[RMDB]
RNA sequence: GGGAACGACUCGAGUAGAGUCGAAAAACAGUCAGUACGCUGGCUGAGGGAAACGGGAGCCGGGCUUGGGACAAGAGCCAUCCCAAGUCCAAGGCCAAGUAGGCUCUAGUGAUGGUACGCCAUCACAAAAACUGGUCUACCUUCGGGUAGACCAGAACAUAACGUUGAUGUUCGCAUCAACGUUAUGAAAAGAAACAACAACAACAAC
Reactivity to 2A3 in 0.01 (KOAc 150mM, MgCl2 10mM, bicine 150mM(pH8.5), 24C), signal-to-noise 5, nucleotides 027 to 156: a000c010a000g010u010c000a000g020u060a030c190g040c120u010g000g000c010u010g010a060g030g040g020a090a130a100c100g060g000g030a050g020c030c050g010g000g000c010u000u000g000g000g000a000c020a060a070g010a000g010c010c000a020u010c000c010c000a000a000g010u000c000c010a070a040g020g000c030c000a060a020g060u140a090g070g010c010u010c010u020a020g000u000g010a000u010g000g020u030a030c270g030c030c000a010u010c000a000c010a000a050a010a000a000c000u000g000g000u000c000u000a000c010c000u020u070c240g070g000g000u000a000g000a000c000c000a000g000a000a000
Reactivity to DMS in 0.01 (KOAc 150mM, MgCl2 10mM, bicine 150mM(pH8.5), 24C), signal-to-noise 1, nucleotides 027 to 156: a140c010a030g000u000c010a060g030u000a090c190g040c010u010g000g000c010u000g010a150g050g030g000a090a120a090c060g000g000g010a140g010c000c040g010g000g020c000u010u010g000g040g010a030c030a030a100g020a020g020c010c070a300u000c000c000c010a020a060g030u000c000c000a030a050g000g050c080c020a080a150g020u000a100g160g000c010u000c020u000a120g000u000g040a050u000g000g020u010a040c300g040c020c000a020u010c010a000c000a040a070a010a040a040c000u000g000g030u000c000u000a030c000c000u010u000c300g020g030g000u000a030g000a010c010c000a000g000a000a130